[RMDB]
RNA sequence: GGGAACGACUCGAGUAGAGUCGAAAAGGUCAGGCCUGAUCGGAAACAGCAGCAGGUGAGUCCGCCUUAUGUGAAGGAUCGGCUGAAACACGAGGAAAUACUGAGCCAACGCACGACGGUAGCCGAAAAAAUCUAGUUCACUUCGGUGAACUAGAAACUUAUACGCUUCCUUCGGGAAGCGUAUAAGAAAAGAAACAACAACAACAAC
Reactivity to DMS in 0.01 (KOAc 150mM, MgCl2 10mM, bicine 150mM(pH8.5), 24C), signal-to-noise 1, nucleotides 027 to 156: g000g060u000c000a160g010g060c000c010u000g020a070u020c010g030g010a230a170a100c070a180g000c070a130g050c100a040g000g030u020g000a070g000u000c060c060g040c000c000u000u010a060u000g010u000g040a080a140g040g040a130u000c060g060g130c010u010g020a130a090a100c040a120c010g000a160g000g000a050a130a090u000a040c030u010g030a030g020c020c020a060a130c030g010c060a060c050g030a060c070g040g030u000a030g020c020c000g060a010a030a040a030a130a160u000c000u000a000g000u000u000c000a060c000u000u000c300g050g070u000g010a000a020c000u000a000g020a010a080a060
Reactivity to 2A3 in 0.01 (KOAc 150mM, MgCl2 10mM, bicine 150mM(pH8.5), 24C), signal-to-noise 2, nucleotides 027 to 156: g060g010u060c030a030g040g080c040c060u170g030a110u030c030g060g000a150a130a060c030a040g030c000a000g000c010a010g000g020u060g010a050g070u020c000c030g000c000c000u060u090a060u110g100u040g040a040a050g050g020a070u110c030g020g000c020u060g000a080a080a000c090a030c040g040a060g020g070a070a040a040u160a090c030u050g020a020g020c010c000a040a010c070g010c050a040c060g120a010c010g080g040u070a030g030c010c020g000a110a000a000a000a000a030u010c000u000a000g000u000u000c010a000c000u060u000c170g060g010u000g000a000a000c000u000a000g010a000a000a020
Structure probing data (DMS and 2A3) for a 207-nucleotide construct. High DMS reactivity at an A or C suggests that its Watson-Crick edge is free. Conditions: 150 mM KOAc, 10 mM MgCl2 and 150 mM bicine (pH 8.5), 24 C. For 2A3 the reverse transcriptase was SuperScript II with manganese. The DMS profile rests on 1,441 reads. The data come from the RNA Mapping Database (RMDB), library M2RFPK. For DMS the reverse transcriptase was MarathonRT. For 2A3, 1,147 sequencing reads were counted.